Conditions: 150 mM KOAc, 10 mM MgCl2 and 150 mM bicine (pH 8.5), 24 C. Chemical mapping of a 207-nucleotide RNA with 2A3.
RNA sequence: GGGAACGACUCGAGUAGAGUCGAAAAUGAGACAAACACGCUUCUCAAUGUGCGGCAAAGAAACAUUGUUUAUGCAAAGGCACUUCGCAAUGUGUGCUCAAACAUUGCUUAUUCAAACACGCUUCACAAAAGAAUCAGUGGUUCGCCACUGAUUCAAGUUCCAGAUGGCCUUCGGGCCAUCUGGAACAAAAGAAACAACAACAACAAC
Reactivity to 2A3 in 0.01 (KOAc 150mM, MgCl2 10mM, bicine 150mM(pH8.5), 24C), signal-to-noise 2, nucleotides 027 to 156: u100g020a000g060a050c050a010a170a000c010a010c040g030c000u030u020c010u000c000a000a020u000g000u000g000c040g020g080c110a050a060a080g040a040a020a020c000a010u000u020g050u050u160u090a170u160g120c040a010a030a090g090g000c010a000c020u060u050c070g020c030a020a070u020g000u000g080u080g040c100u120c240a070a070a000c000a010u030u000g000c000u080u050a120u130u040c110a100a070a000c040a000c120g160c050u090u210c140a050c060a090a060a080a030g000a010a000u010c000a000g000u030g000g080u070u090c220g080c010c000a000c000u000g020a000u000u030c000a000a000
Source: RMDB library M2RFPK, as collected in RNAgym.